Structure probing data (DMS) for a 177-nucleotide construct. Reactivities are given for positions 27 through 126. It was measured as part of the RMDB library TTRINS. For DMS, 2,908 sequencing reads were counted.
RNA sequence: GGGAACGACUCGAGUAGAGUCGAAAAGAUAUGGAAGGUCUCCAGUUUCGGGUAGAGCGAUAAGCAGGUUUCGGAAACGAAACCCUGCUUUUGACGCUCAAACCGAAACUGGAGACCUUCCUAAGUCCAUGCAUAAGUACUUCGGUACUUAUGCAUGAAAAGAAACAACAACAACAAC
Reactivity to DMS in 0.01 (KOAc 150mM, MgCl2 10mM, bicine 150mM(pH8.5), 24C), signal-to-noise 2, nucleotides 027 to 126: g000a110u000a300u010g000g010a020a010g000g030u000c000u000c000c010a020g000u000u000u010c000g000g000g010u010a250g000a010g040c000g010a140u000a010a010g010c000a040g000g030u000u020u000c010g010g010a120a090a300c000g010a010a000a010c100c080c040u000g000c000u000u000u020u000g010a170c090g040c020u010c000a000a120a300c000c000g010a010a010a000c000u010g000g000a000g010a000c010c000u010u010c000c000u000a010a070g000u000c060